Structure probing data (DMS and 2A3) for a 207-nucleotide construct. DMS adducts were read by reverse transcription with MarathonRT. For 2A3, 3,033 sequencing reads were counted. For DMS, 2,886 sequencing reads were counted. The data come from the RNA Mapping Database (RMDB), library M2RFPK. Reactivities are rounded to 0.1 and cut off at 0 and 3.

RNA sequence: GGGAACGACUCGAGUAGAGUCGAAAAGGUAAUGGACGACGGCGGCGUGUGGCGAACAGGGAUACCGGUAGUGAGUGUCUGGAACAUCCCAAGGGGCGGCGGAGCUAGCACCCCGACACGUUAAGGCAAAACUUCGCACGGUUCGCCGUGCGAAGAAGUAUCUUCAAUAGUUCGCUAUUGAAGAUACAAAAGAAACAACAACAACAAC
Reactivity to DMS in 0.01 (KOAc 150mM, MgCl2 10mM, bicine 150mM(pH8.5), 24C), signal-to-noise 1, nucleotides 027 to 156: g000g010u010a060a060u000g020g000a110c030g030a060c020g000g030c090g030g050c080g030u010g040u000g030g050c080g000a050a060c070a100g010g000g010a080u000a100c050c010g010g030u010a070g010u020g000a110g000u000g020u000c070u040g030g000a070a100c130a140u000c010c000c060a120a130g010g000g020g010c060g010g030c050g000g030a110g020c090u000a090g010c040a070c010c000c020c000g020a070c050a050c020g010u000u000a040a080g030g060c030a000a020a020a080c000u000u000c010g000c050a020c000g000g050u000u040c300g050c000c000g030u000g000c020g000a000a010g010a010a110
Reactivity to 2A3 in 0.01 (KOAc 150mM, MgCl2 10mM, bicine 150mM(pH8.5), 24C), signal-to-noise 3, nucleotides 027 to 156: g080g010u100a060a060u100g030g030a020c020g000a010c050g030g010c030g020g020c030g010u060g020u050g030g030c050g020a040a020c050a070g020g000g020a040u060a080c020c030g050g030u070a050g010u050g100a060g010u060g040u010c020u030g000g010a050a010c010a050u030c010c000c030a030a080g010g000g000g020c070g010g020c010g050g010a040g050c060u060a030g010c010a080c010c020c000c000g020a010c030a000c050g040u050u110a020a050g030g000c040a030a060a040a020c000u000u010c000g000c000a000c000g010g000u030u020c080g010c070c000g000u000g000c000g000a010a010g000a000a000